RNA sequence: GGGAACGACUCGAGUAGAGUCGAAAAGAAAGCAGACAAGCAGACCCAUGGCGGCCGCCAGAUACACCGCCGCCAUAAUUCGCCCCCUAUACACCAUGAAGCCCCCACAGUAACUGUGCCCGAAACAGAACACAAAUAGGUAUGCCCGGAGCCCAAACAUAAAGACGUUAUUCGUAACGUCUUUAUGAAAAGAAACAACAACAACAAC
Reactivity to DMS in 0.01 (KOAc 150mM, MgCl2 10mM, bicine 150mM(pH8.5), 24C), signal-to-noise 2, nucleotides 027 to 156: g000a190a110a110g010c000a040g010a120c060a090a240g040c050a100g020a090c030c020c050a090u010g000g020c030g000g060c000c270g050c030c020a160g010a170u000a060c010a080c030c050g030c010c010g070c040c000a010u000a040a170u000u000c100g010c030c010c020c010c030u000a200u010a110c030a090c020c020a050u020g000a100a210g010c020c040c010c030c040a020c030a080g010u000a040a060c010u010g010u000g030c000c000c000g020a060a050a090c060a110g000a050a040c030a050c050a040a020a150u010a050g000g020u020a040u010g000c000c020c030g030g000a120g000c000c010c030a050a110a230